[RMDB]
An RNA of 177 nucleotides, treated with DMS and 2A3 and read out base by base.
The 2A3 profile rests on 1,719 reads.
High DMS reactivity at an A or C suggests that its Watson-Crick edge is free.
Source: RMDB library OK2TST, as collected in RNAgym.
Conditions: 150 mM KOAc, 10 mM MgCl2 and 150 mM bicine (pH 8.5), 24 C.
RNA sequence: GGGAACGACUCGAGUAGAGUCGAAAAAUCGCAAAAGGAUGGUGAUAUUGCCAUGUUGUCUCAGAACGAUCACUUCUUUGAUAUGCUGACGCCUCGAGAAACCUUGGAAUUUGCAGCCUACUUGGAGCUAUCACGGUAGGUUCGCCUACCGUGAUAGAAAAGAAACAACAACAACAAC
Reactivity to DMS in 0.01 (KOAc 150mM, MgCl2 10mM, bicine 150mM(pH8.5), 24C), signal-to-noise 4, nucleotides 027 to 126: a070u000c060g000c070a090a070a060a060g010g000a070u010g010g010u000g010a080u000a060u010u010g000c000c020a040u000g000u000u020g010u000c030u000c030a040g000a130a060c070g000a110u000c030a050c060u000u000c040u010u020u010g010a120u000a040u000g010c100u000g020a060c050g010c070c020u010c130g000a060g010a070a050a090c070c060u010u000g000g000a060a050u000u010u000g020c110a140g000c020c010u000a110c060u000u000g000g000a130g000
Reactivity to 2A3 in 0.01 (KOAc 150mM, MgCl2 10mM, bicine 150mM(pH8.5), 24C), signal-to-noise 1, nucleotides 027 to 126: a000u040c000g000c010a000a000a000a120g030g000a030u110g010g000u050g040a070u080a050u170u130g070c020c030a030u050g050u060u100g210u040c010u000c030a020g000a070a010c010g080a180u030c000a010c000u040u040c040u130u090u190g090a100u080a010u160g040c050u000g010a020c010g010c000c000u000c010g020a020g000a020a020a030c020c040u030u030g030g030a070a030u020u050u110g030c040a020g020c000c000u040a060c010u060u050g040g050a050g040
2A3 adducts were read by reverse transcription with SuperScript II with manganese.